[RMDB]
RNA sequence: GGGAACGACUCGAGUAGAGUCGAAAAAAAAACAAAACCUAGCUUUCGCUGCCUAAUAAGCAGUAGCAUAGCUGAUCCUCCGUGCAUCGCCCAUGUGCUACGGAAAGGGUCUCACUUUAAGUGGGCUACACUAAAUAAUCUCCGUCUGGGGUUAGUUACUAUCGAUUAACUUCGGUUAAUCGAUAGUAAAAGAAACAACAACAACAAC
Reactivity to 2A3 in 0.01 (KOAc 150mM, MgCl2 10mM, bicine 150mM(pH8.5), 24C), signal-to-noise 2, nucleotides 027 to 156: a000a080a000a000a040c100a030a070a010a010c030c030u060a050g000c010u000u100u030c010g000c000u000g020c010c010u100a120a060u240a210a000g010c000a000g000u040a050g020c030a050u020a030g000c030u030g010a060u010c000c000u000c000c010g000u000g020c010a000u010c050g020c000c000c000a000u020g000u010g000c050u090a000c000g000g030a040a090a070g000g000g030u000c070u070c060a130c020u100u240u190a050a010g020u000g000g000g020c020u100a060c030a010c070u100a150a140a050u120a040a030u070c070u030c040c100g300u150c270u290g050g020g010g000u020u050a030g040u000u010
Structure probing data (2A3) for a 207-nucleotide construct. Reactivities are rounded to 0.1 and cut off at 0 and 3. Reactivities are given for positions 27 through 156. Conditions: 150 mM KOAc, 10 mM MgCl2 and 150 mM bicine (pH 8.5), 24 C.